[RMDB]
RNA sequence: GGGAACGACUCGAGUAGAGUCGAAAAAGAGUACGGCCGCAAGGUUUCCGGUUGUGGAUGGCAGCGUGUGUGUCGCCCCGUCGUCUAGUGCUGGUUCUUGGGCUGGGGCGUCAGCAUCCAGGUAAAACCUAAAGGGAUUCUUCGGAAUCCCUUUAGGAAAAGAAACAACAACAACAAC
Reactivity to DMS in 0.01 (KOAc 150mM, MgCl2 10mM, bicine 150mM(pH8.5), 24C), signal-to-noise 2, nucleotides 027 to 126: a080g010a070g020u010a020c060g000g010c050c030g020c120a040a080g020g010u010u000u010c050c020g000g010u010u000g020u020g010g000a050u000g000g020c080a080g010c100g000u000g020u000g020u010g020u000c020g010c020c010c010c030g000u000c110g000u000c040u020a050g010u000g010c050u000g030g010u000u000c020u000u010g020g010g010c020u010g040g010g000g010c020g010u010c040a060g010c030a050u000c030c040a050g000g000u010a080a070a110a140

An RNA of 177 nucleotides, treated with DMS and read out base by base. Reactivities are given for positions 27 through 126. The data come from the RNA Mapping Database (RMDB), library M2PK90. The DMS profile rests on 2,963 reads.